[RMDB]
RNA sequence: GGGAACGACUCGAGUAGAGUCGAAAAGAUAUGGAUGUCUAGUAGCUGCAUGAACUACCGUCGGGAGAGGACUCGGAAACGAGUCCUCUUCUCUAGCGUGCGGCAUGCCGAAAGACAUCCUAAGUCAGAUUGUAUAGGACUUCGGUCCUAUACAAUCAAAAGAAACAACAACAACAAC
Reactivity to DMS in 0.01 (KOAc 150mM, MgCl2 10mM, bicine 150mM(pH8.5), 24C), signal-to-noise 2, nucleotides 027 to 126: g000a070u010a250u010g030g020a030u000g010u010c000u000a140g000u010a250g020c160u000g000c020a030u000g010a040a080c050u020a300c090c060g050u000c160g010g000g000a010g000a050g010g000a030c000u000c010g020g000a010a030a110c000g000a010g020u000c010c000u000c000u000u000c000u020c090u000a120g000c300g010u020g000c020g010g000c000a030u010g010c010c050g000a130a270a040g030a040c000a000u000c000c000u010a000a070g010u010c040a120